Description: Structure probing data (2A3 and DMS) for a 177-nucleotide construct. Conditions: 150 mM KOAc, 10 mM MgCl2 and 150 mM bicine (pH 8.5), 24 C. Values cover nucleotides 27 to 126.
[RMDB]
RNA sequence: GGGAACGACUCGAGUAGAGUCGAAAACAAAGUAUGGAUUGAUAGACGGCCCGAUUUCUGUAACUUUACCCAGAAAUAUGGGCGUCUUCCGUGCUGCUUGUUGGGGAACUUAGGUUCUCUCCUCUCCGAAUUACAUACGUUUCGACGUAUGUAAUUCAAAAGAAACAACAACAACAAC
Reactivity to 2A3 in 0.01 (KOAc 150mM, MgCl2 10mM, bicine 150mM(pH8.5), 24C), signal-to-noise 9, nucleotides 027 to 126: c010a000a050a000g010u010a010u030g010g040a040u050u280g100a090u200a140g020a000c030g300g110c010c000c000g000a000u000u000u000c000u000g090u100a090a170c070u120u180u230a080c050c030c000a000g100a020a000a010u200a230u140g000g000g000c000g000u000c000u010u000c000c000g000u010g010c000u030g020c020u020u020g000u010u010g000g000g000g000a010a000c010u050u040a200g110g060u020u000c000u000c000u010c000c000u030c020u020c060c080
Reactivity to DMS in 0.01 (KOAc 150mM, MgCl2 10mM, bicine 150mM(pH8.5), 24C), signal-to-noise 9, nucleotides 027 to 126: c010a030a050a020g010u000a000u000g000g010a110u020u020g010a120u020a030g010a010c010g020g020c010c000c000g010a020u000u000u000c000u000g000u010a100a130c300u010u010u020a150c260c200c010a010g000a010a010a010u000a040u010g010g010g000c000g010u000c000u000u000c000c010g030u000g000c000u000g010c190u000u000g010u000u000g010g000g000g000a010a010c010u000u020a160g020g010u000u000c000u000c000u000c020c010u000c120u010c090c300